Record summary
An RNA of 177 nucleotides, treated with 2A3 and read out base by base. For 2A3, 1,321 sequencing reads were counted. Source: RMDB library OK1LIB, as collected in RNAgym.
RNA sequence: GGGAACGACUCGAGUAGAGUCGAAAACACACACUAGGGUUCUUCUGAUAGAACCCAGCUCAACAUUCUGAUGUAAUUGUUGACAUAGAUCUUUCAUCAGGAGUACUAUGUAAGUGUGUGGAUACAAGAUAGUAUUCACUUUCGAGUGGAUGCUAUCAAAAGAAACAACAACAACAAC
Reactivity to 2A3 in 0.01 (KOAc 150mM, MgCl2 10mM, bicine 150mM(pH8.5), 24C), signal-to-noise 1, nucleotides 027 to 126: c000a000c000a010c000a010c020u090a030g030g000g030u000u000c010u050u040c080u130g080a110u090a160g000a000a000c000c010c000a000g010c030u000c000a000a010c000a040u080u040c010u090g180a120u140g020u120a040a050u120u120g020u000u000g000a000c000a060u110a070g030a300u000c000u000u230u240c030a200u000c000a070g030g010a020g030u010a090c030u040a020u110g070u080a090a010g000u000g000u000g000u010g030g000a020u080a070c130a100a220